[RMDB]
Structure probing data (2A3) for a 207-nucleotide construct.
The RNA was probed in 150 mM KOAc, 10 mM MgCl2 and 150 mM bicine (pH 8.5) at 24 C.
For 2A3, 896 sequencing reads were counted.
Values cover nucleotides 27 to 156.

RNA sequence: GGGAACGACUCGAGUAGAGUCGAAAAAUGAGAUCCCAUCUUGCACACUGUGCUAAUUUGAGAUUCUCAUGCCUCCUACUUGGAGAGAUCUGGACUAGAAGUCAGGGCAGCUGACUCUGCCAGCCACAAAACGUACAAGGCUUCGGCCUUGUACGAAGUCUUCGACCUAGUUCGCUAGGUCGAAGACAAAAGAAACAACAACAACAAC
Reactivity to 2A3 in 0.01 (KOAc 150mM, MgCl2 10mM, bicine 150mM(pH8.5), 24C), signal-to-noise 2, nucleotides 027 to 156: a010u000g020a010g010a010u000c020c000c000a000u000c010u010u000g000c000a020c020a030c210u250g030u000g000c100u190a050a100u060u010u010g020a020g000a010u300u050c000u010c030a030u070g060c010c020u000c010c010u090a230c070u070u200g020g000a050g010a040g010a080u010c010u010g030g000a040c060u130a120g050a100a020g050u020c010a000g030g060g290c010a110g070c040u010g000a000c000u000c000u020g000c010c000a000g030c030c030a090c040a020a070a020a090c000g010u000a000c000a000a000g020g010c000u050u130c180g060g000c000c000u000u000g000u010a000c000g000a000a000